This 177-nucleotide RNA was probed chemically with 2A3 and DMS.

[RMDB]
RNA sequence: GGGAACGACUCGAGUAGAGUCGAAAACUUACCAUUGCGAUCAGGUUCAUAGACACAAUUGAUGGCAUGUCAGGCACAUUCUCAAGGCCUGACUGGUCAGUUCUUGAGAACAUAUCAAACAGGAUAAUGUUAAUGCCUGUUUCGACAGGCAUUAACAAAAAGAAACAACAACAACAAC
Reactivity to 2A3 in 0.01 (KOAc 150mM, MgCl2 10mM, bicine 150mM(pH8.5), 24C), signal-to-noise 2, nucleotides 027 to 126: c000u030u020a030c010c040a070u020u120g050c020g080a030u050c040a040g020g040u060u070c040a090u150a270g060a030c020a000c010a170a160u140u100g030a070u050g090g010c000a000u070g010u030c000a020g000g090c010a010c020a230u170u030c070u020c060a050a080g030g000c000c000u020g000a000c000u000g030g030u000c010a000g000u020u020c010u040u160g040a110g000a030a010c010a050u110a010u100c000a100a060a020c020a010g140g000a150u120a120a110
Reactivity to DMS in 0.01 (KOAc 150mM, MgCl2 10mM, bicine 150mM(pH8.5), 24C), signal-to-noise 3, nucleotides 027 to 126: c120u010u000a120c080c030a090u020u020g030c070g020a080u000c070a050g000g010u000u000c070a100u010a090g020a100c120a090c130a050a120u020u020g010a070u010g020g000c050a060u010g000u010c000a030g020g000c010a090c060a080u010u010c070u000c080a120a120g000g010c040c010u000g000a020c070u010g020g020u000c030a020g000u000u000c030u000u000g000a040g020a050a050c140a120u010a090u020c070a020a040a140c110a110g010g020a060u000a070a160

For DMS, 1,694 sequencing reads were counted. Reactivities are given for positions 27 through 126. The RNA was probed in 150 mM KOAc, 10 mM MgCl2 and 150 mM bicine (pH 8.5) at 24 C.